[RMDB]
RNA sequence: GGGAACGACUCGAGUAGAGUCGAAAAAGACGGAAACCGAUCGACUGUCACCAGAUGCUGCAUCACCUGAUCACUGAUGGCUCAACGGUAUCCGGCGGUACAACUGAAUACUUGUAGCUGCCUUUUGAAAAGGAGUUCAUCUUCGGAUGAACUCCAAGACACCGUAGAGGUUCGCCUCUACGGUGUCAAAAGAAACAACAACAACAAC
Reactivity to 2A3 in 0.01 (KOAc 150mM, MgCl2 10mM, bicine 150mM(pH8.5), 24C), signal-to-noise 1, nucleotides 027 to 156: a000g060a010c020g000g000a020a130a000c000c040g050a120u140c100g080a040c090u050g000u050c010a000c000c030a060g020a120u030g020c050u160g010c070a120u070c010a090c030c090u100g030a050u080c000a010c080u010g000a000u030g000g000c060u030c040a080a050c030g010g000u010a010u000c000c000g000g000c000g000g030u040a030c000a070a000c050u160g120a150a070u070a120c050u030u030g010u040a010g050c050u030g040c000c030u000u070u050u140g060a100a110a020a040g000g000a000g000u000u030c000a010u000c010u010u110c120g030g000a000u000g000a000a000c020u000c010c000a000a000
Conditions: 150 mM KOAc, 10 mM MgCl2 and 150 mM bicine (pH 8.5), 24 C. An RNA of 207 nucleotides, treated with 2A3 and read out base by base. The data come from the RNA Mapping Database (RMDB), library M2RFPK. For 2A3, 554 sequencing reads were counted.